[RMDB]
An RNA of 207 nucleotides, treated with DMS and 2A3 and read out base by base. The 2A3 profile rests on 1,729 reads. The data come from the RNA Mapping Database (RMDB), library M2RFPK. In probing experiments dimethyl sulfate is read out at A N1 and C N3, which are open when not base-paired. Conditions: 150 mM KOAc, 10 mM MgCl2 and 150 mM bicine (pH 8.5), 24 C.
RNA sequence: GGGAACGACUCGAGUAGAGUCGAAAAGCGCAAAUCCACAAACGCCAACGAUGAGCGUUUCGCUGUAGCCGCUUAAGGCAACAGCCGGGGCCGGCUGAGCCCUGUUACCAAAGACGGCUGGCGGGGGUAAUUACUUAUUGCUUCGGCAAUAAGUAAACAUACGUCAAGGUUUCGACCUUGACGUAUGAAAAGAAACAACAACAACAAC
Reactivity to DMS in 0.01 (KOAc 150mM, MgCl2 10mM, bicine 150mM(pH8.5), 24C), signal-to-noise 1, nucleotides 027 to 156: g050c020g010c000a030a090a070u020c020c010a130c020a030a190a050c050g000c010c030a080a190c180g000a080u000g000a160g000c020g060u000u000u000c040g040c020u000g000u000a040g060c000c020g000c180u010u010a090a160g000g040c000a060a030c000a030g040c060c060g010g000g010g000c030c020g060g030c060u020g010a190g000c010c000c020u000g010u010u000a080c050c030a030a110a170g000a090c130g020g020c010u000g010g000c030g000g070g020g000g010u000a060a130u000u010a010c000u000u000a000u000u000g010c000u000u010c300g060g000c000a000a010u000a000a030g000u000a000a020a300
Reactivity to 2A3 in 0.01 (KOAc 150mM, MgCl2 10mM, bicine 150mM(pH8.5), 24C), signal-to-noise 2, nucleotides 027 to 156: g030c030g000c030a010a060a010u080c070c000a090c070a130a110a000c030g000c020c020a110a060c090g110a180u100g020a030g010c000g000u010u010u070c020g000c000u020g030u070a030g010c000c010g030c130u160u140a080a070g020g000c020a050a030c000a060g010c000c010g000g000g020g000c030c030g110g050c090u080g030a020g010c000c000c010u020g060u050u090a040c010c010a000a000a050g060a040c040g020g000c020u010g010g010c010g000g010g000g040g000u040a070a090u070u030a020c000u000u000a000u000u000g000c000u040u050c120g100g000c000a000a000u000a000a000g000u000a010a000a000